This 177-nucleotide RNA was probed chemically with 2A3 and DMS. The RNA was probed in 150 mM KOAc, 10 mM MgCl2 and 150 mM bicine (pH 8.5) at 24 C. DMS adducts were read by reverse transcription with MarathonRT. 2A3 adducts were read by reverse transcription with SuperScript II with manganese. It was measured as part of the RMDB library OK1LIB. For 2A3, 1,070 sequencing reads were counted.
[RMDB]
RNA sequence: GGGAACGACUCGAGUAGAGUCGAAAAUCACUCCUGUCCAUGGUUGCAGGCUAAUUUCCAGCGAGAAGAAGUUUCAAUGAGGAGAAAGGAGAUUUUGUAUUCAAUUUUCAAAGCUACGUACUGCAACUGGGGAUAUAGUGUUCGCACUAUAUCCCCAAAAAGAAACAACAACAACAAC
Reactivity to 2A3 in 0.01 (KOAc 150mM, MgCl2 10mM, bicine 150mM(pH8.5), 24C), signal-to-noise 2, nucleotides 027 to 126: u080c020a010c050u050c030c000u060g110u120c010c030a090u090g050g000u000u000g000c000a000g000g000c010u200a170a100u000u060u040c000c060a050g020c020g030a080g020a160a000g010a100a010g020u040u040u050c010a000a130u100g030a060g140g010a020g050a050a040a010g060g040a030g000a000u000u010u040u220g100u040a080u010u070c000a090a090u100u000u000u000c000a040a080a110g000c020u020a070c050g050u110a120c000u010g000c000a010a080c080
Reactivity to DMS in 0.01 (KOAc 150mM, MgCl2 10mM, bicine 150mM(pH8.5), 24C), signal-to-noise 4, nucleotides 027 to 126: u050c170a120c070u000c010c000u020g020u010c010c050a040u030g010g000u010u000g010c020a010g000g000c080u060a070a140u000u010u020c060c080a140g030c070g000a250g000a060a080g010a060a120g000u000u010u000c030a080a060u050g000a160g000g010a060g010a090a040a020g000g000a100g000a080u000u010u020u010g000u000a040u030u040c090a070a050u000u000u020u000c050a040a080a130g000c060u040a050c200g020u000a100c020u000g010c010a000a010c060